[RMDB]
RNA sequence: GGGAACGACUCGAGUAGAGUCGAAAAGUUAGCCAGUAAUGGCGAAGCUGAGAAUUUAAGCCCCAGUAAACGGCGGUGGUAACUAUAACCAUCCUAAGGUAGCGAAAUUCCUUGUCGGGUAAGUUCCCGACAACCGGAUUUUCGAAUCCGGUUGUCGAAAAGAAACAACAACAACAAC
Reactivity to DMS in 0.01 (KOAc 150mM, MgCl2 10mM, bicine 150mM(pH8.5), 24C), signal-to-noise 5, nucleotides 027 to 126: g010u000u010a300g000c000c020a010g000u060a140a060u010g020g010c010g000a080a120g010c000u020g000a140g010a080a060u030u010u010a130a190g010c040c060c000c090a130g040u020a070a080a090c130g010g020c200g020g010u000g000g000u010a090a150c200u040a110u010a130a010c000c030a050u000c000c040u020a080a100g010g000u010a100g010c010g000a090a060a070u010u020c000c010u000u010g000u010c020g010g000g020u000a070a150g010u000u010c010c020
Reactivity to 2A3 in 0.01 (KOAc 150mM, MgCl2 10mM, bicine 150mM(pH8.5), 24C), signal-to-noise 4, nucleotides 027 to 126: g060u060u000a000g020c000c000a020g020u130a130a190u040g010g000c000g000a020a000g020c020u050g030a030g030a150a040u030u130u080a120a040g000c020c000c000c000a040g030u190a110a130a040c070g060g020c070g000g030u010g010g010u010a040a060c040u050a080u060a290a020c020c030a020u060c000c000u040a060a030g050g000u020a020g030c020g030a000a020a060u050u040c010c010u040u040g090u060c000g010g010g000u040a120a140g010u030u000c000c000
An RNA of 177 nucleotides, treated with DMS and 2A3 and read out base by base. For 2A3 the reverse transcriptase was SuperScript II with manganese. For DMS the reverse transcriptase was MarathonRT. The reactions ran in a buffer of 150 mM KOAc, 10 mM MgCl2 and 150 mM bicine (pH 8.5), at 24 C. The 2A3 profile rests on 3,098 reads.